[RMDB]
RNA sequence: GGGAACGACUCGAGUAGAGUCGAAAAGGCUUGGCGAUACUGGAUGGGAAAGCAUGCGGAUGGGAAAGCAUGCCAAGGAUGGGAAAGCAUGCUAGCAUACUCCAAGCCAUCACGCUCUUAGCGUACGGAAACCAUCCGGAUGGGAAAGCAUGCGCGCCGUACUUGGGCUAUUCGUAGCCCAAGUACGAAAAGAAACAACAACAACAAC
Reactivity to 2A3 in 0.01 (KOAc 150mM, MgCl2 10mM, bicine 150mM(pH8.5), 24C), signal-to-noise 1, nucleotides 027 to 156: g000g000c030u000u000g000g020c010g080a080u060a140c050u140g020g050a040u030g010g020g020a100a060a000g020c010a010u030g000c040g080g070a110u090g090g030g000a020a050a010g000c020a000u020g000c050c000a090a050g060g050a080u110g030g020g050a010a080a000g010c010a010u010g010c000u000a040g080c020a050u070a110c000u010c000c010a000a040g020c010c000a080u110c000a010c010g000c010u030c100u160u190a020g000c010g000u000a020c030g060g050a120a030a000c010c000a030u000c000c000g010g020a070u040g020g000g020a150a030a000g000c010a000u040g000c020g000c010g010c010
This 207-nucleotide RNA was probed chemically with 2A3. Reactivities are given for positions 27 through 156. The data come from the RNA Mapping Database (RMDB), library OK3TST. For 2A3, 968 sequencing reads were counted. For 2A3 the reverse transcriptase was SuperScript II with manganese.